[RMDB]
RNA sequence: GGGAACGACUCGAGUAGAGUCGAAAAUAUCGACGCGGUUGCUAUUGAAUACCCGUGUAUGGCGUUGCUGACACGGACGAGCAGUGCCAUGUCGGGCGCUGUUUCAAGUCCUAGCCUGCGCUAGAAAAGUCUCACUUCCUUUCGAGGAGGUGGGGCUAAAAGAAACAACAACAACAAC
Reactivity to 2A3 in 0.01 (KOAc 150mM, MgCl2 10mM, bicine 150mM(pH8.5), 24C), signal-to-noise 9, nucleotides 027 to 126: u160a030u060c030g030a010c010g010c030g060g020u060u120g040c050u070a080u070u160g070a080a050u080a130c000c010c010g010u020g010u030a110u050g010g000c030g030u020u070g010c020u020g020a040c020a030c140g040g020a010c020g010a000g000c010a000g000u000g010c000c010a030u100g140u070c080g030g000g000c010g000c000u010g010u020u170u080c060a090a030g020u000c010c000u000a010g000c000c030u060g000c020g000c010u010a010g060a020a030a000
Reactivity to DMS in 0.01 (KOAc 150mM, MgCl2 10mM, bicine 150mM(pH8.5), 24C), signal-to-noise 9, nucleotides 027 to 126: u030a070u010c020g010a060c040g020c060g010g010u010u010g010c040u010a080u020u010g010a110a090u030a100c070c010c000g020u010g010u010a070u010g000g000c020g010u020u030g010c030u010g010a080c090a070c130g000g000a040c080g000a040g000c020a010g010u010g000c000c000a060u020g010u030c160g010g000g010c040g000c020u000g000u000u010u000c060a070a110g010u010c040c060u000a100g000c020c060u010g000c040g000c020u000a070g000a060a090a100